[RMDB]
The record gives the reactivity of an RNA of 207 nucleotides to DMS and 2A3. The RNA was probed in 150 mM KOAc, 10 mM MgCl2 and 150 mM bicine (pH 8.5) at 24 C. 2A3 is a SHAPE reagent: it acylates the 2'-hydroxyl of flexible nucleotides of all four kinds. The 2A3 profile rests on 1,988 reads. DMS adducts were read by reverse transcription with MarathonRT. It was measured as part of the RMDB library OK3TST.
RNA sequence: GGGAACGACUCGAGUAGAGUCGAAAAUACUGAAUGGGCAAAAACUGGAAGCAUUCCCUUUGAAAACUGGCACAAGACAGGGAUGCCCUCUCUCACCACUCCUAUUCAACAUAGUGUUGGAAGUUCUGGCCAUGGCACUCAGGCAGGAGAAAGCAAAACUCAUCAUAGGUUUCGACCUAUGAUGAGUAAAAGAAACAACAACAACAAC
Reactivity to DMS in 0.01 (KOAc 150mM, MgCl2 10mM, bicine 150mM(pH8.5), 24C), signal-to-noise 2, nucleotides 027 to 156: u000a150c020u010g000a110a050u010g030g010g000c040a040a110a030a120a120c040u000g030g000a080a050g040c030a080u000u000c000c010c000u000u000u030g020a100a050a060a150c050u010g020g040c050a100c090a070a080g010a180c070a040g040g010g010a100u000g030c030c000c030u000c000u020c020u000c060a100c060c020a070c040u000c020c020u020a110u000u000c010a070a110c080a150u000a100g000u000g020u000u000g010g000a080a090g000u000u000c020u020g020g010c000c020a090u000g010g020c010a060c030u000c060a080g010g010c030a050g030g010a070g010a040a040a100g030c060a050a030a110
Reactivity to 2A3 in 0.01 (KOAc 150mM, MgCl2 10mM, bicine 150mM(pH8.5), 24C), signal-to-noise 3, nucleotides 027 to 156: u150a020c040u060g040a040a030u070g010g000g000c030a040a010a020a110a090c070u080g040g040a060a020g020c020a040u110u160c020c020c030u090u020u080g090a080a060a010a020c060u070g040g040c040a030c020a160a070g060a040c010a040g030g000g020a010u030g000c010c000c010u020c000u000c000u000c000a060c020c010a060c020u070c010c010u070a110u060u110c020a040a070c030a130u130a080g070u050g010u130u030g040g020a120a080g020u070u060c030u070g010g000c010c030a080u070g020g000c010a030c070u040c070a040g050g010c000a000g000g060a050g050a080a070a000g040c030a040a090a040